[RMDB]
RNA sequence: GGGAACGACUCGAGUAGAGUCGAAAAGCUCGGUGACACCGCGUCUGCCUGGGUCCGAAAGAUUUCUUGUCGCAAAUCUACAAGACAUUGGUUAACGUGUGGGCCGCUUGAGCGGCCGCUCGGCGGGUCAUGGUAUGGUCUUCGGGCCGUGCCAUGAAAAAGAAACAACAACAACAAC
Reactivity to DMS in 0.01 (KOAc 150mM, MgCl2 10mM, bicine 150mM(pH8.5), 24C), signal-to-noise 3, nucleotides 027 to 126: g030c000u010c030g010g000u000g000a120c120a110c050c020g000c040g000u010c060u010g010c010c020u010g010g000g000u010c000c010g000a100a140a060g000a030u000u000u000c030u020u020g010u040c190g000c230a040a040a040u010c020u000a050c100a130a050g000a020c060a080u000u000g010g010u010u010a100a110c050g010u000g010u060g010g020g010c030c000g000c020u040u040g010a070g020c000g020g030c060c060g010c020u010c020g000g000c010g010g000g020
Reactivity to 2A3 in 0.01 (KOAc 150mM, MgCl2 10mM, bicine 150mM(pH8.5), 24C), signal-to-noise 7, nucleotides 027 to 126: g010c000u000c020g040g050u050g040a040c030a020c080c010g030c010g050u020c050u040g020c000c000u030g070g000g010u020c000c000g050a130a070a010g020a010u020u020u030c030u060u150g140u140c060g030c150a040a040a090u030c020u040a030c030a110a000g020a020c030a060u040u100g040g010u100u120a070a020c020g000u020g010u150g080g070g010c010c000g020c030u210u300g050a040g060c000g010g020c010c000g010c010u020c020g060g000c020g010g010g010
An RNA of 177 nucleotides, treated with DMS and 2A3 and read out base by base. For 2A3 the reverse transcriptase was SuperScript II with manganese. The reactions ran in a buffer of 150 mM KOAc, 10 mM MgCl2 and 150 mM bicine (pH 8.5), at 24 C. The data come from the RNA Mapping Database (RMDB), library OK1LIB.